[RMDB]
Source information: The record gives the reactivity of an RNA of 177 nucleotides to 2A3 and DMS. DMS adducts were read by reverse transcription with MarathonRT. Reactivities are given for positions 27 through 126.
RNA sequence: GGGAACGACUCGAGUAGAGUCGAAAAGAUAUGGAGAGGCUAUCUUUUGACGAUUCCUCGGAAACGAGAAUCGAUAAGAUAGCUCUCCUAAGUCAAACUGUCCGCGUAGUUCGCUACGCGGACAGAAUCCUUAUAGCAAGUUCGCUUGCUAUAAGGAAAAAGAAACAACAACAACAAC
Reactivity to 2A3 in 0.01 (KOAc 150mM, MgCl2 10mM, bicine 150mM(pH8.5), 24C), signal-to-noise 4, nucleotides 027 to 126: g010a010u030a010u110g020g000a000g010a020g200g200c010u010a000u000c000u020u300u170u280g150a040c020g000a010u020u030c080c020u000c060g000g000a030a030a000c010g000a010g010a010a000u010c000g080a110u260a210a030g000a010u000a010g000c000u000c010u000c000c000u010a010a000g000u000c030a040a090a130c000u000g000u010c010c000g010c000g000u000a020g030u040u110c290g010c210u000a000c000g000c000g000g010a000c000a000g010a000a010
Reactivity to DMS in 0.01 (KOAc 150mM, MgCl2 10mM, bicine 150mM(pH8.5), 24C), signal-to-noise 4, nucleotides 027 to 126: g010a020u010a280u010g000g000a020g000a040g010g020c000u000a000u000c000u000u000u010u010g020a180c120g000a010u000u000c190c070u000c000g010g000a100a060a130c000g010a020g000a030a000u000c000g010a160u010a020a010g010a010u000a010g000c000u000c000u000c000c000u000a000a060g020u000c020a100a120a210c000u010g000u000c010c000g010c030g000u000a000g000u000u010c260g010c000u000a000c020g020c000g010g020a010c010a000g010a030a100